Source information: This 177-nucleotide RNA was probed chemically with DMS and 2A3. The reactions ran in a buffer of 150 mM KOAc, 10 mM MgCl2 and 150 mM bicine (pH 8.5), at 24 C. DMS adducts were read by reverse transcription with MarathonRT.
RNA sequence: GGGAACGACUCGAGUAGAGUCGAAAAGAGUGAGAAGAUUAGUGAUACAUAAUGAAAGCAAUGCAUUCUUUCACAUGGAAAUGGGAAUAUAAUAAAUGUCCUGCAGGUGAUUGGGGCUGUAGCAAUUCGGAUAUAUAGCAUUCGUGCUAUAUAUCCGAAAAGAAACAACAACAACAAC
Reactivity to DMS in 0.01 (KOAc 150mM, MgCl2 10mM, bicine 150mM(pH8.5), 24C), signal-to-noise 3, nucleotides 027 to 126: g020a040g030u000g000a060g010a100a120g000a080u000u040a050g010u020g020a110u000a060c070a050u000a110a110u020g030a110a120a080g000c140a050a110u000g030c050a060u030u010c040u000u010u000c010a020c020a070u010g000g000a040a070a100u020g000g010g010a010a020u020a080u000a030a070u030a030a060a070u000g000u000c040c030u000g000c070a040g000g000u000g020a100u010u010g000g000g000g000c010u000g020u000a050g020c110a030a180u000u000
Reactivity to 2A3 in 0.01 (KOAc 150mM, MgCl2 10mM, bicine 150mM(pH8.5), 24C), signal-to-noise 4, nucleotides 027 to 126: g040a030g010u120g040a080g030a110a020g020a090u070u100a040g050u010g080a040u070a110c060a040u160a080a110u210g100a060a050a000g030c060a030a070u120g040c020a090u030u050c010u000u030u020c010a010c020a040u060g040g070a020a070a090u110g030g000g020a050a010u110a010u060a180a130u100a070a100a070u170g000u040c000c010u040g000c030a040g060g030u020g050a070u050u060g030g000g000g000c010u030g020u060a040g000c010a010a040u020u000